[RMDB]
RNA sequence: GGGAACGACUCGAGUAGAGUCGAAAAGCUUUAUUUUUCUAAUUAUACGAAGAAGGUAGGUUCUCAUAAAGCCUUCAAGAUGACUAUUGAUGUUUCCAAUACAUUUUCUCAAUGAGUUCAUAAACCCAGACAUUUUGCUAAUGGCUUGGCAAAGUGCUAACAUGCAGAAUUUCGAUUCUGCAUGUUAAAAAGAAACAACAACAACAAC
Reactivity to DMS in 0.01 (KOAc 150mM, MgCl2 10mM, bicine 150mM(pH8.5), 24C), signal-to-noise 2, nucleotides 027 to 156: g000c010u010u000u010a090u030u000u010u010u010c010u010a030a160u000u010a230u010a220c080g010a070a080g000a050a060g030g010u000a060g010g020u000u010c020u000c200a080u000a060a020a080g020c010c010u000u010c050a050a150g020a080u000g010a190c060u000a040u000u000g000a120u000g010u000u000u000c020c030a070a110u000a060c050a050u010u010u000u000c030u010c040a060a110u010g000a050g000u000u000c060a100u010a070a080a110c020c020c010a300g010a070c010a020u000u000u000u010g000c060u010a050a080u000g010g010c160u000u030g030g000c010a020a030a010g040u000g010c030
Reactivity to 2A3 in 0.01 (KOAc 150mM, MgCl2 10mM, bicine 150mM(pH8.5), 24C), signal-to-noise 4, nucleotides 027 to 156: g000c000u140u180u080a140u070u180u130u090u020c050u050a210a180u210u150a140u050a230c040g020a030a080g000a040a000g040g000u070a040g040g070u120u060c070u010c030a020u140a050a060a030g010c000c010u020u010c010a000a020g060a030u060g020a040c050u030a070u050u050g020a030u050g070u020u100u020c040c000a030a050u050a060c030a070u030u060u100u050c060u020c020a030a130u160g020a040g050u030u020c010a030u150a110a140a090c020c030c020a030g010a100c010a030u000u000u010u010g010c000u030a100a090u120g070g030c030u020u030g000g000c020a000a020a000g000u000g010c030

The data come from the RNA Mapping Database (RMDB), library OK3TST. An RNA of 207 nucleotides, treated with DMS and 2A3 and read out base by base. For 2A3, 1,923 sequencing reads were counted. The RNA was probed in 150 mM KOAc, 10 mM MgCl2 and 150 mM bicine (pH 8.5) at 24 C. For DMS, 3,558 sequencing reads were counted.